[RMDB]
RNA sequence: GGGAACGACUCGAGUAGAGUCGAAAAGCCAAACUACCCUCUGGAUCGGGAUAACCUCGGGAAACUGAGGCUAAUCCUGAAUAGCGUUCUCACCCUGGAGUGGGGAGAACGUGAAAUGCUCCGGCGCGUCCACCCGGAGAUUCGUCUCCGGGUGGACAAAAGAAACAACAACAACAAC
Reactivity to 2A3 in 0.01 (KOAc 150mM, MgCl2 10mM, bicine 150mM(pH8.5), 24C), signal-to-noise 2, nucleotides 027 to 126: g030c000c000a070a040a000c090u170a110c000c000c000u020c020u000g010g040a030u050c010g010g000g000a020u000a000a010c000c000u000c000g060g010g000a080a020a040c010u010g000a000g010g000c000u070a120a150u000c000c000u030g000a000a030u050a010g010c000g000u000u000c030u030c030a300c000c020c060u140g120g130a150g160u240g000g010g000g000a000g000a000a000c020g020u000g000a080a090a000u060g000c020u000c000c080g000g000c010g000c080